Chemical mapping of a 177-nucleotide RNA with DMS and 2A3. The DMS profile rests on 5,686 reads.
RNA sequence: GGGAACGACUCGAGUAGAGUCGAAAAGAAGAGAAGUGAGUAAACGCCUAUCCGGUAUAAGCACAGCCCGUCAAAAGGCGUGCGGCGAGGGCACCGGACGCUGUGCUUAUAACUGGGCCCUCGAAGAGGAUAGCCACUGAUUCGUCAGUGGCUAUCCAAAAGAAACAACAACAACAAC
Reactivity to DMS in 0.01 (KOAc 150mM, MgCl2 10mM, bicine 150mM(pH8.5), 24C), signal-to-noise 3, nucleotides 027 to 126: g000a070a100g000a060g010a050a080g010u000g000a120g020u010a020a090a070c060g000c060c040u000a130u010c070c000g020g020u030a040u010a030a050g000c000a010c010a000g010c020c160c040g000u010c090a050a060a100a080g000g010c070g000u000g000c040g010g010c060g000a040g000g020g000c030a090c030c000g030g000a080c060g000c000u020g000u000g050c000u000u000a020u010a050a050c000u000g000g000g000c020c010c020u000c020g000a110a090g000a180
Reactivity to 2A3 in 0.01 (KOAc 150mM, MgCl2 10mM, bicine 150mM(pH8.5), 24C), signal-to-noise 4, nucleotides 027 to 126: g120a040a000g100a010g020a160a000g040u080g070a020g010u120a030a150a020c020g020c020c010u060a080u050c010c000g000g000u030a020u020a060a000g000c010a000c000a000g000c010c010c070g020u040c060a110a060a060a000g090g010c060g020u040g000c000g020g030c090g030a090g020g050g020c060a070c020c000g020g000a000c030g000c000u010g000u000g000c000u030u040a030u030a100a050c010u030g010g030g000c000c000c000u020c010g030a080a020g050a030

For DMS the reverse transcriptase was MarathonRT.